RNA sequence: GGGAACGACUCGAGUAGAGUCGAAAAAUACACUUGAAUGUCGCUCGUUAAAGUGUUUAGAUACGUGUUUCGACGUUACUGCGGCACGCGUAUCGGUGGUGUCUAGAACCGGUGCCACUGCCGCCUAUCAUGUCAAGCGCUUCGGUGCUUGGCAUGAAAAAGAAACAACAACAACAAC
Reactivity to DMS in 0.01 (KOAc 150mM, MgCl2 10mM, bicine 150mM(pH8.5), 24C), signal-to-noise 7, nucleotides 027 to 126: a060u010a050c030a010c020u010u010g000a070a040u010g000u020c160g000c120u030c060g020u000u000a080a030a030g020u000g010u000u010u010a060g000a120u020a040c100g010u000g010u010u000u000c060g030a090c060g010u020u010a070c120u030g010c010g000g020c030a030c090g020c300g010u010a000u000c000g000g010u000g000g020u030g020u020c090u010a090g010a140a030c050c030g020g000u010g000c000c040a300c300u000g000c000c020g010c000c100u000a060
Reactivity to 2A3 in 0.01 (KOAc 150mM, MgCl2 10mM, bicine 150mM(pH8.5), 24C), signal-to-noise 7, nucleotides 027 to 126: a000u120a000c000a000c010u020u040g060a070a020u090g070u130c050g020c090u060c030g050u020u080a040a000a000g010u010g040u040u050u080a050g020a060u120a060c050g020u020g030u050u040u080c060g040a060c040g070u080u110a070c080u090g000c000g010g000c000a010c050g020c030g000u030a000u030c020g010g010u040g010g050u110g080u050c080u100a060g030a130a020c010c020g000g000u020g010c010c000a010c030u020g010c000c010g010c000c000u080a110